[RMDB]
RNA sequence: GGGAACGACUCGAGUAGAGUCGAAAAAAGCCAGCCUCCCCCUCAGAGAAGGCUAAAGGCUGCACGGCCCAGCUCUGGCGGGAGAGGAACCGUGAUUGCAGCCUGGCUCGUCCUUUACGGAAAAAAGACUCACAAAUAGUUUCGACUAUUUGUGAGUAAAAGAAACAACAACAACAAC
Reactivity to 2A3 in 0.01 (KOAc 150mM, MgCl2 10mM, bicine 150mM(pH8.5), 24C), signal-to-noise 2, nucleotides 027 to 126: a000a020g050c020c000a010g010c000c000u010c010c010c020c000c010u010c000a020g020a010g010a170a030g030g000c000u020a050a040a050g040g010c060u050g000c060a040c050g000g000c010c010c000a100g060c020u010c010u020g100g020c040g030g000g020a170g010a000g000g020a020a030c020c020g030u030g090a130u100u250g040c030a000g020c000c000u040g020g000c010u040c050g120u100c000c000u060u040u070a070c030g000g000a070a000a000a020a050a000g080
Reactivity to DMS in 0.01 (KOAc 150mM, MgCl2 10mM, bicine 150mM(pH8.5), 24C), signal-to-noise 5, nucleotides 027 to 126: a090a040g000c010c010a110g000c010c000u000c010c010c010c020c040u000c060a040g010a080g010a220a080g010g000c020u010a130a110a060g000g010c010u000g010c030a080c170g000g010c020c000c100a130g020c010u000c020u000g000g020c240g010g000g010a050g000a040g010g000a050a050c010c030g000u000g010a120u010u000g010c060a060g010c070c010u000g000g000c020u000c120g010u010c020c000u000u000u010a080c090g010g010a010a050a070a090a090a080g000